[RMDB]
RNA sequence: GGGAACGACUCGAGUAGAGUCGAAAAUAACUAGUAAUAGUGACCUUUGAAUAACUCUGUGUUUUCAUUAAAUCGUAGUGUUCAUUUACUUUGUCACUAAUUUCGCAUAACAUAUAUUAUGUUAAAUAACAGAUCUAAUAUUCGUAUUAGAUCUGUUAAAAGAAACAACAACAACAAC
Reactivity to 2A3 in 0.01 (KOAc 150mM, MgCl2 10mM, bicine 150mM(pH8.5), 24C), signal-to-noise 8, nucleotides 027 to 126: u130a020a020c100u060a020g110u130a040a130u010a070g010u010g010a010c010c000u020u040u080g030a020a000u030a050a030c000u000c000u010g050u000g040u060u060u060u080c130a120u090u300a080a050a040u080c030g020u040a000g010u000g010u020u000c030a010u020u020u030a100c080u070u070u110g010u000c000a000c010u010a040a240u050u140u080c070g000c040a030u040a080a010c010a010u100a030u060a050u300u100a040u110g000u000u050a080a090a050u020
Reactivity to DMS in 0.01 (KOAc 150mM, MgCl2 10mM, bicine 150mM(pH8.5), 24C), signal-to-noise 4, nucleotides 027 to 126: u010a100a140c090u020a060g010u020a120a110u010a000g000u000g000a030c010c300u010u000u000g000a030a020u000a020a020c000u010c040u000g010u020g000u010u000u020u030c230a090u030u040a030a010a020u010c040g010u000a020g000u000g000u000u010c120a000u000u000u000a030c160u000u000u010g010u010c010a000c000u000a020a100u010u010u000c050g000c090a080u010a020a010c020a070u010a120u070a150u020u020a010u010g000u000u010a030a070a130u010

An RNA of 177 nucleotides, treated with 2A3 and DMS and read out base by base. 2A3 is a SHAPE reagent: it acylates the 2'-hydroxyl of flexible nucleotides of all four kinds. Source: RMDB libraries RFM100 and RFMREP, as collected in RNAgym. DMS adducts were read by reverse transcription with MarathonRT. Reactivities are rounded to 0.1 and cut off at 0 and 3. The RNA was probed in 150 mM KOAc, 10 mM MgCl2 and 150 mM bicine (pH 8.5) at 24 C.